Conditions: 150 mM KOAc, 10 mM MgCl2 and 150 mM bicine (pH 8.5), 24 C. This 177-nucleotide RNA was probed chemically with DMS and 2A3. For DMS the reverse transcriptase was MarathonRT. For 2A3 the reverse transcriptase was SuperScript II with manganese. High DMS reactivity at an A or C suggests that its Watson-Crick edge is free. For DMS, 1,560 sequencing reads were counted.
RNA sequence: GGGAACGACUCGAGUAGAGUCGAAAAGAUAUGGAGCUACAAGGCUUUUGACGUUGGGUCGGAAACGACCCUGCGAUAAGCCUGUAGCUCCUAAGUCAAAACGAUGUGACGUUCGCGUCACAUCGAAGAUGCAUUGUACCUUCGGGUACAAUGCAUCAAAAGAAACAACAACAACAAC
Reactivity to DMS in 0.01 (KOAc 150mM, MgCl2 10mM, bicine 150mM(pH8.5), 24C), signal-to-noise 1, nucleotides 027 to 126: g000a030u000a050u000g010g000a010g000c000u000a010c020a030a010g020g010c000u000u000u000u000g000a240c010g020u000u020g000g010g010u000c000g010g000a000a010a040c030g010a010c000c000c000u000g000c000g020a030u030a010a040g010c000c000u000g000u000a000g000c000u000c000c010u000a000a020g010u000c010a080a080a160a220c020g010a010u000g010u000g010a020c000g020u000u010c260g010c000g030u000c010a000c010a000u000c000g010a070a050
Reactivity to 2A3 in 0.01 (KOAc 150mM, MgCl2 10mM, bicine 150mM(pH8.5), 24C), signal-to-noise 2, nucleotides 027 to 126: g020a000u020a000u060g000g000a010g020c010u030a020c070a190a210g050g020c040u060u140u270u300g090a020c000g000u010u020g000g010g000u000c010g000g000a020a000a010c010g000a000c030c020c000u000g020c000g050a040u060a300a010g000c000c010u000g000u010a000g000c000u000c000c000u000a000a000g010u000c010a000a000a020a080c020g000a000u010g000u000g000a000c000g030u070u000c300g020c010g110u040c000a010c000a000u000c000g000a000a030